Structure probing data (2A3) for a 207-nucleotide construct. It was measured as part of the RMDB library ARCHII.
[RMDB]
RNA sequence: GGGAACGACUCGAGUAGAGUCGAAAACAGGUCGAAAAUCAAGUGAAUCGCCGUAACGGAGCGUGUUCGUCCGCGACGUCACGGUUAAAUCAAAUGACAGAACUAAACAUGUAGAACUGGUCGUGGACCGCUUCUGGACGCGGGUUCGAUUCCCGCCCCGACGGAUACACUUCGGUGUAUCCGUCGGAAAAGAAACAACAACAACAAC
Reactivity to 2A3 in 0.01 (KOAc 150mM, MgCl2 10mM, bicine 150mM(pH8.5), 24C), signal-to-noise 1, nucleotides 027 to 156: c030a000g010g010u060c020g110a000a000a100a140u040c060a040a110g140u070g240a140a000u010c030g000c030c000g000u010a050a000c000g050g020a000g000c000g020u060g080u190u240c110g030u010c000c000g020c000g000a000c000g030u100c050a030c190g010g000u090u020a090a180a000u180c000a010a020a020u120g030a030c150a090g080a090a040c140u180a160a050a000c110a030u150g050u100a040g040a130a050c010u090g000g000u020c020g110u150g000g010a000c000c000g020c050u020u010c060u090g030g060a030c040g010c010g000g000g000u090u180c030g010a000u040u040c050c000c000g060c100c010

The reactions ran in a buffer of 150 mM KOAc, 10 mM MgCl2 and 150 mM bicine (pH 8.5), at 24 C.